[RMDB]
RNA sequence: GGGAACGACUCGAGUAGAGUCGAAAAGAUAUGGACCAUUUGUAUUAAGAUUCGUCGCUAGAUCUCACUCGGAAACGAGUGGUGAUCUUGGACCGACGAAUCUUAAUACAACUGUGGUCCUAAGUCACACAGACUAAAAGUUCGCUUUUAGUCUGUGAAAAGAAACAACAACAACAAC
Reactivity to DMS in 0.01 (KOAc 150mM, MgCl2 10mM, bicine 150mM(pH8.5), 24C), signal-to-noise 4, nucleotides 027 to 126: g000a050u000a300u010g000g010a030c000c000a010u000u020u000g000u010a000u000u000a000a010g010a010u000u000c010g030u010c000g030c020u000a020g000a020u000c000u000c000a010c000u000c000g000g000a140a140a250c020g010a030g010u000g010g010u020g020a000u000c000u000u000g010g010a150c300c020g000a020c000g020a010a000u000c000u010u010a010a010u000a000c000a000a010c300u000g020u000g010g000u000c000c010u010a010a080g000u010c070a300
Reactivity to 2A3 in 0.01 (KOAc 150mM, MgCl2 10mM, bicine 150mM(pH8.5), 24C), signal-to-noise 1, nucleotides 027 to 126: g050a010u060a060u240g000g000a000c010c000a000u050u020u040g020u000a030u010u000a010a000g000a000u020u000c000g000u010c000g040c090u020a010g000a030u010c020u000c020a010c010u000c020g070g000a110a120a100c020g020a020g010u010g000g040u080g000a000u000c000u020u080g020g060a040c020c020g000a010c000g010a000a000u000c000u010u020a010a000u010a010c000a010a010c010u090g020u020g000g000u000c000c010u000a040a010g000u000c000a010

This 177-nucleotide RNA was probed chemically with DMS and 2A3. For DMS, 4,739 sequencing reads were counted. It was measured as part of the RMDB library TTRINS. Conditions: 150 mM KOAc, 10 mM MgCl2 and 150 mM bicine (pH 8.5), 24 C.